[RMDB]
RNA sequence: GGGAACGACUCGAGUAGAGUCGAAAAUUGGCCUUGAGGUGCCCGGCUCUGCACUUUCCGACUUCGGGGGCCUUUCUAGAAAAUGUUGCAAAAAAGCUAAGCCAGCGGGCAGAGGAAAACGCCUAUAUUGGCUACUUUUAUUCGUAAAAGUAGCCAAAAAAGAAACAACAACAACAAC
Reactivity to DMS in 0.01 (KOAc 150mM, MgCl2 10mM, bicine 150mM(pH8.5), 24C), signal-to-noise 1, nucleotides 027 to 126: u020u000g000g000c000c080u000u010g030a090g060g010u010g030c000c000c020g000g000c000u000c010u000g000c020a050c050u000u000u000c050c040g000a090c050u010u010c010g000g000g000g000g020c100c060u030u030u000c010u030a190g000a190a080a080a110u040g000u000u000g000c110a010a050a040a100a100a100g020c000u000a080a140g030c060c060a040g000c020g000g000g000c020a080g040a060g010g010a070a030a040a110c080g000c010c000u000a070u040a090
Chemical mapping of a 177-nucleotide RNA with DMS.
The RNA was probed in 150 mM KOAc, 10 mM MgCl2 and 150 mM bicine (pH 8.5) at 24 C.
The DMS profile rests on 1,642 reads.
DMS adducts were read by reverse transcription with MarathonRT.